[RMDB]
RNA sequence: GGGAACGACUCGAGUAGAGUCGAAAAGAUGUGGAUGGAGCGCAUAUUAGAACAUUGUUAUUAACAUUCUUCUAUCGAUUUAUGAGACCGUUAAUUGAAGCAGGCUAUGUGUAUAUUGCACAGCCACGAGGGCUAGAAGAUUCGUCUUCUAGCCCUCAAAAGAAACAACAACAACAAC
Reactivity to DMS in 0.01 (KOAc 150mM, MgCl2 10mM, bicine 150mM(pH8.5), 24C), signal-to-noise 3, nucleotides 027 to 126: g000a100u010g010u010g010g000a030u010g020g000a090g000c050g010c050a040u030a060u040u020a090g010a070a040c150a120u000u000g000u040u030a060u000u030a030a030c060a060u010u000c030u010u000c110u000a020u020c300g040a070u010u010u020a050u010g020a070g030a080c180c050g010u000u010a010a040u010u030g000a060a100g000c130a100g000g030c020u010a030u000g020u000g000u040a100u030a150u050u030g010c020a040c030a060g000c020c010a060c130
Reactivity to 2A3 in 0.01 (KOAc 150mM, MgCl2 10mM, bicine 150mM(pH8.5), 24C), signal-to-noise 5, nucleotides 027 to 126: g080a020u100g000u040g080g000a030u030g060g000a090g000c000g030c070a010u020a080u110u130a070g060a070a050c060a070u020u100g040u100u080a130u120u090a040a010c000a070u030u010c020u030u000c020u030a110u060c060g130a060u020u140u100a080u140g010a030g040a050c030c050g040u010u030a060a040u070u080g060a050a040g050c180a120g020g020c040u060a060u140g010u000g030u000a060u000a070u210u150g000c010a000c000a030g060c000c010a020c040